[RMDB]
Structure probing data (2A3 and DMS) for a 177-nucleotide construct. For DMS the reverse transcriptase was MarathonRT. The 2A3 profile rests on 3,160 reads. The reactions ran in a buffer of 150 mM KOAc, 10 mM MgCl2 and 150 mM bicine (pH 8.5), at 24 C.

RNA sequence: GGGAACGACUCGAGUAGAGUCGAAAAGUAAUGACCUCUCAGCCCCUCCACCUUGGGGUGCCCUAUUCGGAGCACUGCAGUUCCCGAUAGAAAGGCUAAGCACUUCGCAAUGAAGUAAGGUGGGACUCAAGUUCUUAAAGUUCGCUUUAAGAACUUGAAAAGAAACAACAACAACAAC
Reactivity to 2A3 in 0.01 (KOAc 150mM, MgCl2 10mM, bicine 150mM(pH8.5), 24C), signal-to-noise 2, nucleotides 027 to 126: g050u070a060a090u120g100a050c000c020u010c020u000c020a030g020c000c000c000c000u000c000c000a010c010c000u000u000g000g000g000g030u030g020c020c010c000u010a020u010u020c000g040g030a040g010c030a060c190u300g000c040a040g010u060u030c010c030c000g020a010u010a030g040a050a090a020g020g030c040u040a080a000g040c020a010c020u000u010c010g020c150a090a230u300g010a010a000g020u020a010a000g000g000u000g010g020g000a000c010u000
Reactivity to DMS in 0.01 (KOAc 150mM, MgCl2 10mM, bicine 150mM(pH8.5), 24C), signal-to-noise 3, nucleotides 027 to 126: g010u000a090a070u010g000a100c110c030u010c070u010c060a220g000c000c000c000c000u000c020c000a020c020c010u010u000g010g010g010g020u000g000c010c010c000u010a120u000u000c240g010g000a060g010c030a050c120u030g000c180a150g000u010u000c080c000c010g020a050u000a030g000a060a110a130g010g000c000u010a070a110g010c160a050c010u000u000c010g040c140a100a110u010g000a000a010g000u010a010a000g010g010u000g010g000g040a110c190u000